[RMDB]
RNA sequence: GGGAACGACUCGAGUAGAGUCGAAAAGAUAUGGACACACGCGAGUUGACAUGGUGUCUCGGAAACGAGACCCAACAGCAACUCGUGUCCUAAGUCAAACCAAUACCCCGUUCGCGGGGUAUUGGAAUCGUGUAUAUCGGUUCGCCGAUAUACACGAAAAAGAAACAACAACAACAAC
Reactivity to DMS in 0.01 (KOAc 150mM, MgCl2 10mM, bicine 150mM(pH8.5), 24C), signal-to-noise 3, nucleotides 027 to 126: g000a080u000a300u000g000g020a030c010a080c160a130c290g020c140g000a010g000u000u000g020a070c060a210u000g010g010u010g010u000c000u000c000g020g010a080a030a110c030g020a010g010a030c010c010c010a020a050c260a130g000c010a030a000c000u000c000g000u000g000u000c030c000u020a030a120g000u000c020a090a120a240c000c000a030a000u000a010c000c000c000c000g020u010u010c230g010c030g000g000g020g010u000a000u000u000g000g000a050a020
Reactivity to 2A3 in 0.01 (KOAc 150mM, MgCl2 10mM, bicine 150mM(pH8.5), 24C), signal-to-noise 3, nucleotides 027 to 126: g040a000u070a040u150g000g000a000c010a010c010a030c200g200c070g030a010g000u000u040g080a190c070a140u060g040g010u230g020u140c000u000c000g000g000a060a060a030c000g000a000g000a000c000c010c000a060a050c090a040g070c010a000a000c000u000c010g020u020g000u010c000c000u030a100a020g050u040c050a090a050a100c000c000a010a000u010a010c000c010c020c000g040u040u060c270g040c030g140g000g010g000u000a000u000u010g000g000a000a080
This 177-nucleotide RNA was probed chemically with DMS and 2A3. For DMS, 2,188 sequencing reads were counted. 2A3 is a SHAPE reagent: it acylates the 2'-hydroxyl of flexible nucleotides of all four kinds. For DMS the reverse transcriptase was MarathonRT. It was measured as part of the RMDB library TTRDEL.